[RMDB]
RNA sequence: GGGAACGACUCGAGUAGAGUCGAAAAGAAAGAAAGAAGCGAGCUGGCGCAGCCGCACGGGCAACCGACAAUCCAGCACUUCACAAGUCUUGUCGUUCUGACAGGACAUCCAUCAACCCACCGGGAAAAAAGGACUACAGCUUCGGCUGUAGUCCAAGUUAGUAUAUGGGUUCGCCCAUAUACUAACAAAAGAAACAACAACAACAAC
Reactivity to 2A3 in 0.01 (KOAc 150mM, MgCl2 10mM, bicine 150mM(pH8.5), 24C), signal-to-noise 4, nucleotides 027 to 156: g030a010a040a000g030a030a120a010g010a050a010g020c080g060a010g020c020u020g030g020c020g000c070a030g000c030c040g090c060a050c080g040g000g010c040a070a060c060c020g050a050c070a020a050u060c010c000a010g030c030a040c010u040u040c030a030c040a180a060g010u000c010u010u020g000u000c010g100u230u210c140u250g000a010c000a000g010g010a000c000a010u000c000c000a040u050c050a040a120c010c010c030a030c080c090g000g010g050a020a040a040a040a040a080g010g000a030c000u000a000c000a030g010c000u020u120c220g140g000c000u000g000u000a000g000u000c000c000a000a000
Reactivity to DMS in 0.01 (KOAc 150mM, MgCl2 10mM, bicine 150mM(pH8.5), 24C), signal-to-noise 1, nucleotides 027 to 156: g000a150a170a130g020a150a060a120g000a030a050g030c050g010a140g000c000u000g000g000c070g000c050a300g030c010c000g070c060a140c070g010g030g020c040a060a120c160c020g030a050c030a030a200u000c000c030a110g030c020a060c040u000u000c030a150c070a060a170g000u000c000u010u000g050u000c000g020u000u000c120u000g000a000c030a000g020g010a010c000a050u000c000c050a050u000c080a120a130c090c000c000a180c040c030g000g030g000a000a010a000a070a140a070g000g020a020c020u010a000c000a020g030c010u010u000c300g030g000c000u020g040u000a020g000u010c000c000a030a040